[RMDB]
RNA sequence: GGGAACGACUCGAGUAGAGUCGAAAAUACAAGUCAGUGAUCUGAAGCUUCCACAGUUACAGAAUUGGGAGAGGUUCUGAGAUGGGGUUGAAACCCAUUUUACUGAGGCCUUGAGGUCCAGCGGUGUCUGAUAUUUCCUACAGAAAUGAAAAGUACCAGAAUACCCAUGAUUCGUCAUGGGUAUUCUAAAAGAAACAACAACAACAAC
Reactivity to 2A3 in 0.01 (KOAc 150mM, MgCl2 10mM, bicine 150mM(pH8.5), 24C), signal-to-noise 2, nucleotides 027 to 156: u150a010c020a070a020g040u020c020a010g010u020g100a040u040c000u050g050a060a030g030c030u060u030c050c030a050c020a100g050u070u080a120c030a040g070a050a120u140u080g020g030g000a020g010a020g040g010u030u040c010u040g030a030g000a070u010g010g000g000g000u090u130g090a090a070a010c000c000c000a020u040u040u030u030a010c010u020g010a100g010g010c010c000u060u110g040a050g000g020u020c010c000a010g010c040g050g010u030g030u000c000u010g000a010u000a050u130u050u010c010c000u020a050c020a070g090a040a090a030u070g040a100a030a050a050g050u060a060c000c050
Reactivity to DMS in 0.01 (KOAc 150mM, MgCl2 10mM, bicine 150mM(pH8.5), 24C), signal-to-noise 2, nucleotides 027 to 156: u000a040c010a070a130g030u000c040a090g060u000g020a060u000c040u020g020a100a110g040c020u000u000c040c050a080c060a060g000u000u000a200c070a110g010a030a090u000u000g020g000g020a200g000a110g010g020u000u000c010u000g030a130g010a050u000g020g010g020g030u000u000g000a170a090a100c010c000c000a000u010u000u000u000a040c070u000g000a130g010g010c060c000u000u000g030a090g020g010u000c020c030a090g020c040g020g040u000g010u000c030u000g030a100u000a050u000u000u000c040c010u000a300c090a110g010a060a050a090u000g000a080a110a040a150g000u000a040c070c080